[RMDB]
RNA sequence: GGGAACGACUCGAGUAGAGUCGAAAAAGCGAAAGAGAAAAGCCAAAGGGCGUAGUCAUAGGGUAUGACGGAUGAGAAGUCCAAUCUUCAUGUUGGCUUGCUACCAUAGCAUUCCAUCGUGAAUUUAUUUAACAGGGAAUUUCGAUUCCCUGUUAAAAAAAGAAACAACAACAACAAC
Reactivity to DMS in 0.01 (KOAc 150mM, MgCl2 10mM, bicine 150mM(pH8.5), 24C), signal-to-noise 8, nucleotides 027 to 126: a070g010c040g000a060a080a070g010a100g000a080a050a080a150g000c020c030a040a100a090g000g000g010c050g000u000a060g010u000c030a030u010a090g000g010g020u030a050u010g000a070c070g000g010a070u010g000a110g010a110a100g000u010c030c030a100a080u020c110u000u000c020a030u000g000u000u000g000g000c060u000u000g000c030u000a100c240c200a120u030a030g010c010a020u000u000c010c000a020u010c040g030u010g000a040a040u010u010u030a080
Reactivity to 2A3 in 0.01 (KOAc 150mM, MgCl2 10mM, bicine 150mM(pH8.5), 24C), signal-to-noise 7, nucleotides 027 to 126: a000g120c070g090a080a090a010g110a010g020a020a100a040a040g030c020c020a040a120a030g070g010g020c050g010u040a020g030u010c010a040u080a060g170g010g010u130a060u060g040a020c030g020g020a010u050g050a050g030a060a030g020u010c020c010a030a060u040c040u020u010c010a020u040g000u000u010g000g000c000u000u000g000c000u060a120c030c110a180u260a060g000c000a000u020u000c010c000a010u020c020g000u010g000a010a030u050u080u070a150

Background: Chemical mapping of a 177-nucleotide RNA with DMS and 2A3. Conditions: 150 mM KOAc, 10 mM MgCl2 and 150 mM bicine (pH 8.5), 24 C. Reactivities are given for positions 27 through 126. For 2A3 the reverse transcriptase was SuperScript II with manganese. It was measured as part of the RMDB libraries RFM100 and RFMREP.